[RMDB]
This 207-nucleotide RNA was probed chemically with DMS and 2A3. For 2A3 the reverse transcriptase was SuperScript II with manganese. Conditions: 150 mM KOAc, 10 mM MgCl2 and 150 mM bicine (pH 8.5), 24 C. For 2A3, 2,563 sequencing reads were counted. Reactivities are rounded to 0.1 and cut off at 0 and 3. The data come from the RNA Mapping Database (RMDB), library M2RFPK.

RNA sequence: GGGAACGACUCGAGUAGAGUCGAAAACGAGGGGUGGGCAAAAGUUGCCAUGAGACCGUAACUUUCGUAGUCAUUGAUAAAGGGGCAGGUCUCGCUCUUUUGUCAUUGCGGUUGCCUAGAGGCAUGGAAAACCAUGACAGGUUCGCCUGUCAUGGAAGGCUUAGUGUAAGUUCGCUUACACUAAGCCAAAAGAAACAACAACAACAAC
Reactivity to DMS in 0.01 (KOAc 150mM, MgCl2 10mM, bicine 150mM(pH8.5), 24C), signal-to-noise 1, nucleotides 027 to 156: c040g000a160g000g000g000g000u000g010g040g050c090a040a050a060a100g010u010u010g020c000c070a160u000g020a070g050a030c030c020g010u020a070a060c020u010u010u000c110g000u000a090g010u000c120a180u000u000g000a060u000a040a020a050g000g010g000g020c030a070g010g010u000c070u010c100g010c010u000c010u000u000u000u000g010u010c010a140u000u000g000c080g000g050u000u000g000c020c040u000a150g020a120g000g000c060a030u020g030g010a040a060a070a170c020c000a010u000g000a000c010a010g000g020u000u010c300g040c000c020u000g020u010c000a010u000g020g000a030a050
Reactivity to 2A3 in 0.01 (KOAc 150mM, MgCl2 10mM, bicine 150mM(pH8.5), 24C), signal-to-noise 3, nucleotides 027 to 156: c030g010a080g030g030g010g010u080g010g020g010c010a010a070a010a020g100u160u040g030c040c040a040u120g050a010g010a040c030c010g010u050a020a040c000u020u140u190c110g010u020a060g030u090c090a130u060u140g040a030u040a060a030a010g010g000g020g030c030a040g060g100u050c060u060c060g020c000u000c000u000u010u010u020g010u010c010a020u010u090g020c020g000g020u030u040g040c000c000u060a080g040a110g050g000c010a010u080g040g000a050a110a000a000c000c000a000u000g000a000c010a000g020g020u020u040c090g080c040c000u000g000u000c000a010u000g020g000a010a000